[RMDB]
RNA sequence: GGGAACGACUCGAGUAGAGUCGAAAAGCUAGCCUGCGCACGAUCUGACUGCCGUGAAGUCUGGCCUGCGUCAGAACUAGUCUCCAUCAAUCAAAGCGCAGGGAUUGAUGUACGAGACUAGUACACAGUGUAAUGACUUCUUCGGAGGUCGUUACACAAAAGAAACAACAACAACAAC
Reactivity to DMS in 0.01 (KOAc 150mM, MgCl2 10mM, bicine 150mM(pH8.5), 24C), signal-to-noise 9, nucleotides 027 to 126: g000c040u010a070g010c020c010u000g010c020g020c030a150c140g000a070u010c040u020g000a070c030u010g010c040c030g010u010g000a090a080g000u010c020u010g000g000c020c040u000g010c080g010u010c080a080g000a070a030c000u000a000g000u000c000u000c000c010a010u000c000a000a000u000c010a080a090a100g010c030g010c030a030g010g000g000a010u000u000g000a010u000g000u050a100c170g000a010g010a010c000u000a000g010u000a080c140a100c190a140
Reactivity to 2A3 in 0.01 (KOAc 150mM, MgCl2 10mM, bicine 150mM(pH8.5), 24C), signal-to-noise 9, nucleotides 027 to 126: g050c040u050a010g020c000c010u010g000c010g010c010a040c060g060a080u030c030u070g060a050c020u040g020c020c010g050u050g070a080a010g050u010c020u020g010g010c000c020u060g020c020g060u060c040a030g020a060a010c000u000a000g000u000c000u000c000c000a000u000c000a000a000u000c010a060a080a060g040c030g000c030a020g020g010g000a000u000u000g000a000u000g030u060a080c090g000a000g000a000c000u000a000g020u060a020c080a010c010a040

Chemical mapping of a 177-nucleotide RNA with DMS and 2A3. DMS adducts were read by reverse transcription with MarathonRT. The DMS profile rests on 65,194 reads. It was measured as part of the RMDB library OK1LIB. The RNA was probed in 150 mM KOAc, 10 mM MgCl2 and 150 mM bicine (pH 8.5) at 24 C.